An RNA of 177 nucleotides, treated with DMS and read out base by base. It was measured as part of the RMDB library TTRINS. DMS (dimethyl sulfate) methylates the pairing face of unpaired adenines and cytosines.
[RMDB]
RNA sequence: GGGAACGACUCGAGUAGAGUCGAAAAGAUAUGGAACGGGGAAUGGUACACUAUGUGACAUGCUCUAGGGUCGGAAACGACCCGAUGAGCAACAGCACAUAGUGUACCAUUCCACCGUUCCUAAGUCCAAGGCAUUAGUGUUCGCACUAAUGCCUUGAAAAGAAACAACAACAACAAC
Reactivity to DMS in 0.01 (KOAc 150mM, MgCl2 10mM, bicine 150mM(pH8.5), 24C), signal-to-noise 2, nucleotides 027 to 126: g000a130u010a300u010g020g020a010a010c010g020g000g010g010a030a000u010g000g000u000a000c000a010c000u000a010u010g010u000g020a050c100a300u000g000c000u010c000u000a300g000g000g020u000c020g000g000a130a100a300c000g020a010c000c000c000g000a030u010g010a000g000c000a010a010c300a120g000c010a000c010a000u010a000g010u010g000u000a000c000c000a000u010u000c000c000a060c000c000g010u000u000c000c000u000a010a060g000u000c070